RNA sequence: GGGAACGACUCGAGUAGAGUCGAAAAGAUAUGGAUUCGUGUACAGGAGCAACAGCUCGGAAACGAGACAUGCUCCGUACCGAAUCCUAAGUCAAAAGGCACUACGUGGUUCGCCACGUAGUGCCAACGUAUACCUUCGGUUCGCCGAAGGUAUACGAAAAGAAACAACAACAACAAC
Reactivity to 2A3 in 0.01 (KOAc 150mM, MgCl2 10mM, bicine 150mM(pH8.5), 24C), signal-to-noise 3, nucleotides 027 to 126: g040a020u060a050u130g000g000a010u030u030c040g000u040g020u300a120c260a300g000g020a000g010c020a030a140c080a210g030c000u000c010g000g010a080a110a040c000g010a000g010a020c020a050u030g000c020u040c000c000g000u020a000c000c010g010a010a010u000c000c000u000a010a010g030u010c050a050a000a110a180g010g000c000a010c010u020a000c000g020u020g030g080u060u110c250g090c070c000a000c000g000u000a000g000u000g000c000c020a000a000
Reactivity to DMS in 0.01 (KOAc 150mM, MgCl2 10mM, bicine 150mM(pH8.5), 24C), signal-to-noise 3, nucleotides 027 to 126: g000a040u010a300u020g000g000a030u000u000c000g010u010g010u000a000c010a130g040g000a010g010c010a020a080c300a170g000c000u000c000g010g000a080a110a220c000g000a010g010a050c120a160u000g000c010u000c000c010g000u000a000c000c000g010a000a000u010c000c000u000a000a050g000u010c030a060a060a070a110g000g000c010a010c000u000a010c000g020u000g000g000u000u010c240g010c010c020a010c010g010u000a000g010u000g010c000c010a000a000

Overview: Source: RMDB library TTRDEL, as collected in RNAgym. The record gives the reactivity of an RNA of 177 nucleotides to 2A3 and DMS. The 2A3 profile rests on 5,226 reads. 2A3 adducts were read by reverse transcription with SuperScript II with manganese. Reactivities are given for positions 27 through 126.